[RMDB]
Chemical mapping of a 177-nucleotide RNA with 2A3 and DMS. DMS adducts were read by reverse transcription with MarathonRT. The data come from the RNA Mapping Database (RMDB), libraries RFM100 and RFMREP. Conditions: 150 mM KOAc, 10 mM MgCl2 and 150 mM bicine (pH 8.5), 24 C.

RNA sequence: GGGAACGACUCGAGUAGAGUCGAAAAUACUUAUGCUAUCUGGGGGAUGGCUUGGCUUGAGUUGCCUAUGAAGGUCGUGGUAAGCUGCGAUAAGCUUGGGCGAGGAGCAUACAUCUUUGGAACCCAACUUGUUCAAAGAUUUCGAUCUUUGAACAAGAAAAGAAACAACAACAACAAC
Reactivity to 2A3 in 0.01 (KOAc 150mM, MgCl2 10mM, bicine 150mM(pH8.5), 24C), signal-to-noise 9, nucleotides 027 to 126: u110a020c060u130u090a070u190g010c010u030a070u120c050u080g040g000g000g020g030a040u060g030g000c000u030u060g070g000c010u030u040g030a050g090u140u060g050c000c010u090a120u130g090a090a030g060g000u030c020g000u020g010g030u070a080a050g050c030u030g010c030g060a060u030a110a040g010c000u030u050g020g010g000c020g020a050g020g030a010g030c010a010u050a090c030a050u020c000u040u050u070g060g030a050a050c000c000c000a010a050
Reactivity to DMS in 0.01 (KOAc 150mM, MgCl2 10mM, bicine 150mM(pH8.5), 24C), signal-to-noise 6, nucleotides 027 to 126: u020a070c110u020u010a040u020g000c030u010a060u020c060u010g020g000g010g000g000a090u010g010g010c050u020u010g000g000c030u000u000g010a160g020u010u010g010c010c020u010a070u010g010a100a060g000g000u000c050g030u000g000g010u010a080a110g020c030u000g010c090g000a060u000a090a070g010c030u000u000g010g000g010c050g000a070g000g010a070g010c070a050u010a080c150a060u010c020u000u010u000g010g010a100a150c010c000c020a080a180